RNA sequence: GGGAACGACUCGAGUAGAGUCGAAAAGCCACCGCACCCGGCAAAGUUCACCUUUUUAAAGUGUGUAAUUCAGUGGCAUAUAGUACAUUGACAGAGUUGCACAACUAUCACCUCUAUCAGCUUCCAGAACAUUCUUGUUACCCCAGAAGGAAACCCAUCACUGCGUUUUAUUCGUAAAACGCAGUGAAAAAGAAACAACAACAACAAC
Reactivity to 2A3 in 0.01 (KOAc 150mM, MgCl2 10mM, bicine 150mM(pH8.5), 24C), signal-to-noise 1, nucleotides 027 to 156: g000c000c000a010c000c000g040c030a030c010c000c010g010g070c110a040a030a070g040u050u060c060a130c020c010u040u000u000u090u300a250a150a020g010u000g000u000g010u130a010a010u120u170c000a000g000u000g100g000c090a000u060a000u000a200g060u040a040c060a210u000u090g040a010c010a080g020a060g040u000u050g000c000a070c030a210a170c010u030a040u270c010a040c070c030u010c040u070a050u000c000a000g010c010u040u070c040c000a020g000a070a040c020a090u040u100c010u080u120g030u150u120a090c010c000c010c010a020g050a050a020g000g130a000a170a000c040c040c070a000

Source information: Structure probing data (2A3) for a 207-nucleotide construct. The reactions ran in a buffer of 150 mM KOAc, 10 mM MgCl2 and 150 mM bicine (pH 8.5), at 24 C.